[RMDB]
RNA sequence: GGGAACGACUCGAGUAGAGUCGAAAAAAACGCUCGGAAGCGUGAGCGAUUUCCACUGCGCGGGUAAUCCCCAGCGGAGAUUCAAUCGCCGCCAGCAGGCCGGUGCUGCCGGGUUCACGACCACAGGCAAAUCUCUUACUUUCGAGUAAGAGAUUUGAAAAGAAACAACAACAACAAC
Reactivity to 2A3 in 0.01 (KOAc 150mM, MgCl2 10mM, bicine 150mM(pH8.5), 24C), signal-to-noise 2, nucleotides 027 to 126: a020a000a030c020g000c020u020c050g110g040a170a080g110c070g060u050g010a000g000c010g020a040u030u040u030c030c000a030c030u060g030c040g020c070g010g020g010u120a110a150u210c020c010c010c020a020g000c010g070g020a010g000a010u220u200c110a090a140u020c050g050c040c020g000c030c000a000g050c030a020g050g040c070c040g110g040u100g030c050u070g010c040c000g090g020g020u050u090c040a030c070g000a030c030c020a040c040a080g020g100
Reactivity to DMS in 0.01 (KOAc 150mM, MgCl2 10mM, bicine 150mM(pH8.5), 24C), signal-to-noise 4, nucleotides 027 to 126: a030a060a090c070g020c010u010c060g010g010a160a100g020c070g000u010g000a060g010c110g000a150u000u000u010c010c020a140c050u000g000c080g020c160g010g010g000u000a160a100u010c130c000c010c030a110g000c030g010g010a020g000a040u000u010c150a080a150u000c020g010c010c040g000c040c030a080g010c030a080g010g030c080c040g000g010u000g020c090u010g000c030c020g010g010g010u000u000c110a060c050g000a090c020c010a070c130a090g010g020
Chemical mapping of a 177-nucleotide RNA with 2A3 and DMS.
The DMS profile rests on 3,686 reads.